[RMDB]
RNA sequence: GGGAACGACUCGAGUAGAGUCGAAAAAGCGAGGGAUUCUUUGACUAGAGAGAUGAACCGCGAAAUAGAAUUCUGGUAUGUAUUAGCAUAGCGUGUCAAUUCGCAGUGACGAUACGAGAAUAAAGAUUGACUAAACAUGUAGCGCCAUCUGUUAGACCGGUGUAGUACACUUCGGUGUACUACACCGAAAAGAAACAACAACAACAAC
Reactivity to 2A3 in 0.01 (KOAc 150mM, MgCl2 10mM, bicine 150mM(pH8.5), 24C), signal-to-noise 2, nucleotides 027 to 156: a010g230c230g040a300g040g000g000a050u030u000c010u040u020u070g010a030c030u030a060g020a000g000a000g030a250u020g000a020a000c000c000g040c000g090a080a000a100u230a040g080a020a020u000u010c000u080g010g030u090a030u050g030u010a050u070u100a090g010c020a010u050a010g010c060g020u020g040u040c060a080a140u130u080c050g010c060a010g040u050g070a010c010g000a000u050a120c030g050a030g020a100a040u170a060a110a010g020a060u030u040g020a040c050u170a000a130a170c020a050u140g020u080a000g000c040g000c020c000a050u050c090u140g050u030u020a010g050a050c010
The record gives the reactivity of an RNA of 207 nucleotides to 2A3. For 2A3, 555 sequencing reads were counted. 2A3 adducts were read by reverse transcription with SuperScript II with manganese.